The record gives the reactivity of an RNA of 177 nucleotides to DMS and 2A3. The data come from the RNA Mapping Database (RMDB), library OK2TRN. For 2A3 the reverse transcriptase was SuperScript II with manganese. The reactions ran in a buffer of 150 mM KOAc, 10 mM MgCl2 and 150 mM bicine (pH 8.5), at 24 C.

[RMDB]
RNA sequence: GGGAACGACUCGAGUAGAGUCGAAAACGCGCUCCGCGUCCCAGCCGUAUGCGUGGCUGCGCGACGCCGGGUUGCCGAACUGCUCGCGCAGAUACGGCACCAUCUUGUCGACGACGCGCGGAUCGAACCUCAGCGAUCGAUUCGUCGAUCGCUGAGGAAAAGAAACAACAACAACAAC
Reactivity to DMS in 0.01 (KOAc 150mM, MgCl2 10mM, bicine 150mM(pH8.5), 24C), signal-to-noise 1, nucleotides 027 to 126: c060g030c010g010c040u000c000c160g010c000g040u010c040c040c000a040g000c000c020g010u000a020u000g000c250g020u000g000g000c000u000g050c040g010c050g000a000c000g040c160c130g000g000g010u000u000g090c000c010g000a150a080c000u020g010c000u000c300g010c300g020c010a020g000a050u000a190c010g000g020c000a010c010c020a070u030c170u010u030g000u000c020g000a080c040g020a090c130g000c000g030c020g020g000a030u000c010g040a080a090
Reactivity to 2A3 in 0.01 (KOAc 150mM, MgCl2 10mM, bicine 150mM(pH8.5), 24C), signal-to-noise 2, nucleotides 027 to 126: c010g030c000g030c020u040c070c010g000c020g030u000c020c040c000a000g000c000c030g170u190a110u300g180c280g090u100g130g090c000u030g050c020g000c040g000a010c020g030c020c000g000g020g060u180u170g040c010c000g010a080a030c040u040g070c000u020c140g000c000g000c000a010g000a030u190a140c000g010g000c000a020c040c000a070u110c030u150u160g080u090c020g000a100c020g010a000c020g060c020g000c000g030g010a020u030c040g040a070a120